[RMDB]
RNA sequence: GGGAACGACUCGAGUAGAGUCGAAAAGCGCUCCUGAACGUGACUUCAGAAGACGGGCGCCGACAAGUUAGAUUGUCAAGGCGACAGUGUAGUGACACUGGGUAUUCUAACAUACCAAUCGCCGGCGCGUUGAGUCACGUCAACAACCGUCGAGCGAACUCAAAAUGGAUUUCGAUCCAUUUUGAGUAAAAGAAACAACAACAACAAC
Reactivity to DMS in 0.01 (KOAc 150mM, MgCl2 10mM, bicine 150mM(pH8.5), 24C), signal-to-noise 3, nucleotides 027 to 156: g000c000g040c000u000c010c010u030g020a060a020c000g040u000g010a040c020u000u000c070a160g010a140a140g000a130c040g000g020g040c000g030c020c000g020a040c010a090a090g010u010u000a120g010a200u000u010g000u000c040a050a110g050g020c030g010a100c030a050g010u000g020u000a170g010u000g030a290c020a050c020u010g000g020g020u000a040u000u010c000u010a070a090c050a060u000a100c040c030a110a110u010c030g030c010c010g000g040c010g000c040g010u000u010g010a080g010u000c030a010c020g020u000c020a050a030c030a110a110c040c060g000u000c040g000a090g030c000g000a090
Reactivity to 2A3 in 0.01 (KOAc 150mM, MgCl2 10mM, bicine 150mM(pH8.5), 24C), signal-to-noise 6, nucleotides 027 to 156: g060c040g010c040u020c000c030u000g020a060a010c000g000u000g010a010c010u120u040c230a130g030a270a000g050a090c030g020g030g000c000g000c000c020g010a010c000a020a000g060u170u150a030g060a220u050u040g020u030c060a090a110g030g000c010g020a010c010a020g000u000g040u060a270g140u160g220a020c000a000c010u030g040g030g000u010a020u030u060c100u170a060a040c010a070u030a020c010c000a030a050u040c020g000c000c000g000g000c020g000c010g030u060u070g010a000g000u010c000a000c010g010u020c010a040a050c020a020a110c000c020g030u050c010g010a020g030c050g020a030
Chemical mapping of a 207-nucleotide RNA with DMS and 2A3. The 2A3 profile rests on 5,297 reads. Values cover nucleotides 27 to 156. The DMS profile rests on 8,605 reads. DMS adducts were read by reverse transcription with MarathonRT. Conditions: 150 mM KOAc, 10 mM MgCl2 and 150 mM bicine (pH 8.5), 24 C.